[RMDB]
An RNA of 177 nucleotides, treated with 2A3 and DMS and read out base by base. Conditions: 150 mM KOAc, 10 mM MgCl2 and 150 mM bicine (pH 8.5), 24 C. It was measured as part of the RMDB library OK2TRN.
RNA sequence: GGGAACGACUCGAGUAGAGUCGAAAAGAGCGAGUUAAUAUUAGAUCGUCGCGAUCUAAAAAGUCCGACACGCUGUCGCGGGGCAGCACCUCCCGGGAAAGGGCCCUUGGUGCGUAUUCGAAAGAAAGAUAGUAGUCGUAUUCGUACGACUACUAUCAAAAGAAACAACAACAACAAC
Reactivity to 2A3 in 0.01 (KOAc 150mM, MgCl2 10mM, bicine 150mM(pH8.5), 24C), signal-to-noise 4, nucleotides 027 to 126: g070a010g010c030g010a030g030u050u110a150a080u090a170u160u050a010g010a030u010c020g150u090c110g050c120g200a000u000c000u030a000a030a040a040a020g110u040c070c030g020a010c010a010c040g030c020u050g030u100c030g010c030g140g000g010g010c040a060g000c000a040c000c000u000c010c000c010g040g030g020a080a150a050g030g020g030c000c010c000u030u090g020g000u020g000c010g010u090a220u040u090c050g050a080a060a080g070a030a080a020
Reactivity to DMS in 0.01 (KOAc 150mM, MgCl2 10mM, bicine 150mM(pH8.5), 24C), signal-to-noise 6, nucleotides 027 to 126: g000a070g020c020g020a090g010u010u010a070a120u000a170u000u000a030g000a000u000c010g020u010c230g030c120g000a000u000c010u000a010a030a090a130a110g010u010c120c070g010a050c070a070c070g020c020u000g010u000c050g020c080g020g010g000g010c070a080g010c020a070c030c020u010c020c010c010g010g000g000a050a090a110g020g010g000c060c030c020u010u000g010g020u000g010c030g010u010a090u000u010c050g000a100a080a130g000a050a060a120